[RMDB]
RNA sequence: GGGAACGACUCGAGUAGAGUCGAAAAAUCAAUUCAUUAAUUUGGCAAAGUCCAUUUCAGGUAUUUUGAGCUACAUUUUAAAAUAAUAUGAUGCGUUUUGGCAAAAUAUCAUAUUUGGAGAAAACUCCCAUCCUGGCUAUUUCGAUAGCCAGGAUGGAAAAGAAACAACAACAACAAC
Reactivity to 2A3 in 0.01 (KOAc 150mM, MgCl2 10mM, bicine 150mM(pH8.5), 24C), signal-to-noise 2, nucleotides 027 to 126: a010u160c090a060a040u300u000c050a010u010u300a200a170u190u150u030g070g020c050a150a160a000g100u000c000c050a000u000u000u140c100a000g000g000u070a000u020u000u070u060g040a020g010c010u070a050c080a080u100u070u050u210a130a270a020a040u230a010a040u090a060u170g080a090u110g030c070g060u140u000u140u110g100g020c020a020a020a010a020u040a030u000c000a000u020a080u050u010u020g020g000a030g020a060a140a040a020c020u010c070